[RMDB]
RNA sequence: GGGAACGACUCGAGUAGAGUCGAAAAGGGCUGGCCUGGAAAAACGGCAGUGAAGGAAAAUCCUUUGAUUUAUGUGGGUGGUGCCUCAUGGGAGAUGCCCCAUCCUCACGGGCGUGCUGCCUUUCAGUCUAGUAUAUUCCUUCGGGAAUAUACUAGAAAAAGAAACAACAACAACAAC
Reactivity to DMS in 0.01 (KOAc 150mM, MgCl2 10mM, bicine 150mM(pH8.5), 24C), signal-to-noise 6, nucleotides 027 to 126: g000g010g020c060u000g010g000c030c000u010g000g010a070a060a060a100a090c130g010g010c050a050g010u000g010a060a060g010g010a120a090a130a130u000c020c080u000u010u000g000a100u000u000u010a050u030g020u000g000g000g020u010g010g010u000g010c000c020u000c020a120u010g000g010g010a080g010a070u010g000c010c030c000c030a120u000c010c010u000c040a070c110g010g010g000c080g020u010g010c020u000g000c010c020u000u000u000c060a100g000
Reactivity to 2A3 in 0.01 (KOAc 150mM, MgCl2 10mM, bicine 150mM(pH8.5), 24C), signal-to-noise 4, nucleotides 027 to 126: g040g000g010c040u050g030g030c000c020u030g040g030a070a110a020a010a020c040g020g010c010a020g040u050g120a030a050g040g040a080a120a030a170u110c020c000u090u050u140g120a140u070u140u180a150u200g050u060g010g000g000u010g010g000u010g010c000c000u040c040a100u130g150g240g010a230g000a030u110g030c040c000c000c000a010u000c000c000u000c010a030c020g000g000g020c070g060u090g000c010u040g000c010c000u010u090u030c030a030g030